Chemical mapping of a 177-nucleotide RNA with DMS and 2A3. Source: RMDB library OK1LIB, as collected in RNAgym. For DMS, 22,744 sequencing reads were counted. The RNA was probed in 150 mM KOAc, 10 mM MgCl2 and 150 mM bicine (pH 8.5) at 24 C. The 2A3 profile rests on 24,127 reads.

RNA sequence: GGGAACGACUCGAGUAGAGUCGAAAAGAGGUAUUUUGCACAUCAACACCACCUGUAAUGUGACCGACUCGCUGCACGCCGCCAAACUAGGCGAAGCCCUCGUUAACAGCGCGCUAGCUUUAUUUGGUCUGUCAUAUUAGUUCGCUAAUAUGACAGAAAAAGAAACAACAACAACAAC
Reactivity to DMS in 0.01 (KOAc 150mM, MgCl2 10mM, bicine 150mM(pH8.5), 24C), signal-to-noise 8, nucleotides 027 to 126: g010a080g010g020u010a030u010u020u000u010g000c060a050c040a060u010c120a090a080c060a070c030c030a050c030c040u010g010u020a050a060u010g010u010g000a090c040c020g010a080c050u000c050g010c030u010g010c050a060c060g010c070c040g010c010c030a020a050a080c120u020a080g000g020c020g000a090a110g020c040c010c020u000c040g000u010u010a070a080c150a080g000c020g000c080g010c020u010a060g010c060u010u000u020a070u020u020u010g000g010
Reactivity to 2A3 in 0.01 (KOAc 150mM, MgCl2 10mM, bicine 150mM(pH8.5), 24C), signal-to-noise 9, nucleotides 027 to 126: g120a020g030g070u120a150u050u170u120u150g040c020a030c010a080u080c050a050a070c020a030c060c010a040c010c030u050g050u140a070a070u120g040u070g080a060c000c020g060a060c020u010c060g030c020u040g000c020a010c060g060c020c000g020c020c020a050a110a070c070u090a050g050g000c020g030a030a010g020c010c000c000u020c010g030u030u060a090a050c010a050g020c010g000c010g010c060u050a030g010c000u100u120u060a180u090u130u110g130g010